Structure probing data (DMS and 2A3) for a 207-nucleotide construct. 2A3 adducts were read by reverse transcription with SuperScript II with manganese. For DMS, 3,254 sequencing reads were counted. For 2A3, 7,682 sequencing reads were counted. The RNA was probed in 150 mM KOAc, 10 mM MgCl2 and 150 mM bicine (pH 8.5) at 24 C. Source: RMDB library RNAMAK, as collected in RNAgym.

[RMDB]
RNA sequence: GGGAACGACUCGAGUAGAGUCGAAAACGCUGGGCAGAACGCGCCUGUCUCGAGGAUCUCCUGAAGCGCGCACGGGAGGGAGAGACCUGCUAAGCUGCCUGUGCUGAAGCGCGCACGGCAACCGAAAGGUGCGAAAACAGGUCGGUUCGCCGACCUGCAAAUCCACAAUGUUCGCAUUGUGGAUUUGAAAAGAAACAACAACAACAAC
Reactivity to DMS in 0.01 (KOAc 150mM, MgCl2 10mM, bicine 150mM(pH8.5), 24C), signal-to-noise 2, nucleotides 027 to 156: c050g040c030u000g010g000g000c020a060g000a060a100c090g030c090g000c110c030u000g010u000c000u010c050g000a110g030g000a060u010c020u000c010c020u000g010a070a100g030c020g000c030g010c000a300c020g020g000g000a060g000g020g000a040g010a030g000a030c020c040u010g010c030u020a180a110g000c000u000g000c000c020u000g030u000g030c010u020g000a060a050g000c070g060c040g030c000a300c050g000g000c020a110a070c010c020g040a100a080a120g030g010u000g050c020g010a130a080a050a160c000a050g000g010u000c000g010g010u000u000c300g050c010c000g020a000c020c000u010g010
Reactivity to 2A3 in 0.01 (KOAc 150mM, MgCl2 10mM, bicine 150mM(pH8.5), 24C), signal-to-noise 4, nucleotides 027 to 156: c030g010c020u040g000g010g000c010a010g030a180a050c080g040c020g050c110c140u090g020u010c000u000c000g040a230g020g000a010u000c000u010c000c010u030g040a200a040g020c000g000c010g010c000a020c020g010g000g000a000g000g020g000a000g000a000g000a020c030c050u070g020c030u080a120a090g100c010u000g000c000c000u000g000u000g000c020u040g030a120a040g010c010g010c000g000c000a010c010g000g000c010a010a020c010c010g040a080a040a010g030g000u010g000c020g030a040a040a030a090c010a010g000g010u000c000g000g000u040u050c120g020c090c000g000a000c000c000u000g000